Chemical mapping of a 207-nucleotide RNA with 2A3 and DMS. The DMS profile rests on 6,498 reads. The 2A3 profile rests on 5,367 reads. The reactions ran in a buffer of 150 mM KOAc, 10 mM MgCl2 and 150 mM bicine (pH 8.5), at 24 C.
[RMDB]
RNA sequence: GGGAACGACUCGAGUAGAGUCGAAAAGAUUCAAGAGCAUCCAUCUAAAUAUUUUCCUCGUGUUUCUCACUCUCCAGCCACUGAUGUCUCCAUCGAGUCUUGGGUGCUUCUUCCAGUCUUUGAUUCAUAGGCUUACCCAUCAGACAUCAACAUGUAAGGUAAAUUUACUAUUCGUAGUAAAUUUACCAAAAGAAACAACAACAACAAC
Reactivity to 2A3 in 0.01 (KOAc 150mM, MgCl2 10mM, bicine 150mM(pH8.5), 24C), signal-to-noise 7, nucleotides 027 to 156: g040a020u150u110c100a040a020g000a000g020c010a010u000c020c010a040u010c100u210a100a200a150u150a170u040u120u070u070c010c010u050c060g040u020g000u030u080u010c050u000c010a040c020u070c010u020c040c020a040g010c020c010a040c040u040g020a040u040g050u010c010u020c040c010a090u060c040g020a010g040u010c030u060u050g010g010g010u010g000c000u080u060c000u090u020c030c020a030g020u000c020u040u110u100g080a120u120u090c050a050u120a090g000g010c000u020u050a070c010c030c010a050u070c010a020g080a040c010a030u160c020a010a060c020a080u270g070u300a070a060
Reactivity to DMS in 0.01 (KOAc 150mM, MgCl2 10mM, bicine 150mM(pH8.5), 24C), signal-to-noise 2, nucleotides 027 to 156: g030a090u000u000c070a020a090g020a060g020c030a060u000c030c030a110u000c050u020a090a110a140u000a080u000u000u010u000c000c010u000c020g030u000g010u000u000u010c020u000c030a100c040u000c020u000c030c030a130g030c010c050a070c070u000g020a070u010g020u020c040u000c000c030a100u000c040g010a080g020u000c020u000u000g020g020g020u000g000c010u000u000c020u000u000c040c020a080g020u000c010u000u000u000g010a160u000u000c070a120u000a110g000g020c020u000u000a120c030c030c020a070u000c040a070g020a080c010a070u000c040a060a100c050a100u000g020u010a130a240